[RMDB]
RNA sequence: GGGAACGACUCGAGUAGAGUCGAAAAGUGGCGCGUAAGGAAUGAAUUCUUCCGAAAGAAUCAGUGGUAACAUUGUAGUAUGAGGAGGUUGGACUAGUGUUGCAUCGUCCGUCUUGAAACACGGGCCCAAAACACACGACUUCGGUCGUGUGUUUUGAAAAGAAACAACAACAACAAC
Reactivity to DMS in 0.01 (KOAc 150mM, MgCl2 10mM, bicine 150mM(pH8.5), 24C), signal-to-noise 3, nucleotides 027 to 126: g020u000g000g000c020g000c030g020u000a090a120g010g010a040a080u020g000a120a030u020u000c030u010u000c030c050g020a120a130a090g000a080a070u000c060a030g010u000g040g000u070a070a130c050a050u010u020g030u030a020g020u020a050u010g010a180g030g020a030g030g000u010u010g000g000a060c060u020a020g000u020g000u000u000g010c070a070u020c120g020u010c000c010g000u010c020u000u020g010a080a130a090c290a020c010g020g000g000c030c170
Reactivity to 2A3 in 0.01 (KOAc 150mM, MgCl2 10mM, bicine 150mM(pH8.5), 24C), signal-to-noise 3, nucleotides 027 to 126: g070u030g010g000c040g010c020g030u080a000a090g070g040a050a100u160g040a040a100u220u020c020u040u000c020c020g050a080a130a000g070a020a080u010c060a010g010u010g060g030u040a080a010c010a040u000u040g060u030a040g010u010a020u110g050a050g070g000a000g020g030u000u060g020g000a040c050u060a090g060u060g040u100u030g000c070a030u100c040g020u000c000c000g000u000c010u060u090g150a060a070a000c030a010c040g000g020g000c000c000